Chemical mapping of a 207-nucleotide RNA with 2A3 and DMS.
The data come from the RNA Mapping Database (RMDB), library ARCHII.
The RNA was probed in 150 mM KOAc, 10 mM MgCl2 and 150 mM bicine (pH 8.5) at 24 C.
The 2A3 profile rests on 1,183 reads.
[RMDB]
RNA sequence: GGGAACGACUCGAGUAGAGUCGAAAAGGGACUUUCACCGAUGACUGGGCUCAUCAUCCGGGUGUGUUCGUCCAAGCCGGAGAGCCGAGUAGAGAUCCACGCGCGAACUGCGCACGGAGAAGCCCUAGCGAGGUGACGUAGGACCCGGGUUCAAUUCACAUCGUCUAAUGUUCGCAUUAGACGAUGUAAAAGAAACAACAACAACAAC
Reactivity to 2A3 in 0.01 (KOAc 150mM, MgCl2 10mM, bicine 150mM(pH8.5), 24C), signal-to-noise 2, nucleotides 027 to 156: g050g010g000a030c010u040u040u000c010a020c010c010g110a140u090g070a090c030u080g010g040g000c000u020c060a160u040c030a110u000c050c000g000g000g020u030g010u030g010u060u010c020g010u030c040c010a040a030g050c030c050g040g000a110g020a000g200c040c020g010a040g030u270a040g020a010g000a020u030c020c010a020c080g010c010g000c020g000a060a020c040u140g000c050g040c010a010c020g050g000a020g000a010a040g000c010c010c040u040a010g000c020g040a050g010g010u040g000a000c070g060u040a010g000g080a140c000c000c020g000g000g000u040u050c050a090a080u100u100c050
Reactivity to DMS in 0.01 (KOAc 150mM, MgCl2 10mM, bicine 150mM(pH8.5), 24C), signal-to-noise 2, nucleotides 027 to 156: g040g000g000a200c020u000u000u000c030a060c030c000g000a120u000g030a040c030u000g020g040g030c030u000c080a110u030c070a100u000c000c030g000g020g040u000g020u000g010u010u000c070g000u030c050c080a170a120g020c000c030g000g000a130g010a060g000c020c020g020a150g010u020a190g000a120g000a140u000c010c040a230c070g020c010g000c000g010a050a090c120u000g050c020g020c010a000c010g010g010a130g030a190a080g020c000c000c020u000a060g010c010g000a220g000g000u000g000a060c280g000u000a060g000g020a130c020c010c010g020g040g010u020u000c050a070a300u010u030c040